[RMDB]
RNA sequence: GGGAACGACUCGAGUAGAGUCGAAAAAAGACGAGGUUUCACCGUGUUAGCCAGGAUGGUCUUGAUCUCCUGACCUCAUGAGCCACCGUGUCCGGCCUCUAUGCAGUUUUAUCACAUGUGUAGCUUCUUGUAACCACCACCACAAUCAAGAUAUUAAAGCGGUAUUACCAUUCGUGGUAAUACCGCUAAAAGAAACAACAACAACAAC
Reactivity to 2A3 in 0.01 (KOAc 150mM, MgCl2 10mM, bicine 150mM(pH8.5), 24C), signal-to-noise 2, nucleotides 027 to 156: a000a000g160a030c090g020a040g040g000u000u080u160c020a020c030c050g020u010g020u090u080a010g020c080c010a020g020g030a030u050g070g000u060c040u170u190g060a180u050c090u000c010c040u000g060a070c000c000u040c010a060u050g020a000g020c000c020a020c020c000g000u020g060u140c060c050g000g000c030c000u010c000u000a080u070g000c000a010g010u070u000u130u070a090u130c030a050c000a110u100g000u030g000u050a010g020c010u000u040c030u090u040g020u090a040a050c000c010a060c000c000a050c010c020a020c020a060a000u080c020a090a020g100a160u060a050u170u300a260a270

Chemical mapping of a 207-nucleotide RNA with 2A3. The 2A3 profile rests on 635 reads. For 2A3 the reverse transcriptase was SuperScript II with manganese. Reactivities are given for positions 27 through 156.